[RMDB]
RNA sequence: GGGAACGACUCGAGUAGAGUCGAAAAGCUUUUCCAGAACGAUUUCUGUCGUGUAAGCGUUUUGUGAUGACAGCCGCCAAGCUAUAUGCUGAUAACAGCAAUGGCAGUAUGCUAAUCCAACUAAAAGUCCCUAAUAUAUCUUCGGAUAUAUUAGGGAAAAAGAAACAACAACAACAAC
Reactivity to DMS in 0.01 (KOAc 150mM, MgCl2 10mM, bicine 150mM(pH8.5), 24C), signal-to-noise 6, nucleotides 027 to 126: g010c070u000u000u000u000c040c010a110g000a070a030c060g000a040u000u010u010c090u010g020u010c130g020u020g010u010a040a080g010c030g010u000u000u010u000g010u010g010a050u000g000a110c130a050g020c030c080g010c020c060a070a160g010c050u000a060u000a100u010g020c020u000g010a200u010a120a150c040a020g010c010a030a080u000g000g020c000a070g010u000a040u010g010c030u000a090a100u010c040c040a040a100c150u010a040a080a100a170g010
Reactivity to 2A3 in 0.01 (KOAc 150mM, MgCl2 10mM, bicine 150mM(pH8.5), 24C), signal-to-noise 4, nucleotides 027 to 126: g000c010u040u060u050u000c020c010a020g040a040a010c010g040a050u030u150u100c060u130g300u150c050g030u040g020u180a040a040g030c010g010u030u000u050u070g050u050g020a060u050g050a030c030a020g020c010c010g030c010c010a070a020g010c020u020a020u030a070u170g000c000u020g010a100u080a300a160c010a010g000c000a000a000u000g000g000c000a000g050u050a040u120g010c010u030a040a030u050c030c020a020a030c050u130a020a120a040a020g240
Conditions: 150 mM KOAc, 10 mM MgCl2 and 150 mM bicine (pH 8.5), 24 C. Structure probing data (DMS and 2A3) for a 177-nucleotide construct. For 2A3 the reverse transcriptase was SuperScript II with manganese. For DMS the reverse transcriptase was MarathonRT. For 2A3, 3,462 sequencing reads were counted. It was measured as part of the RMDB library OK2TST.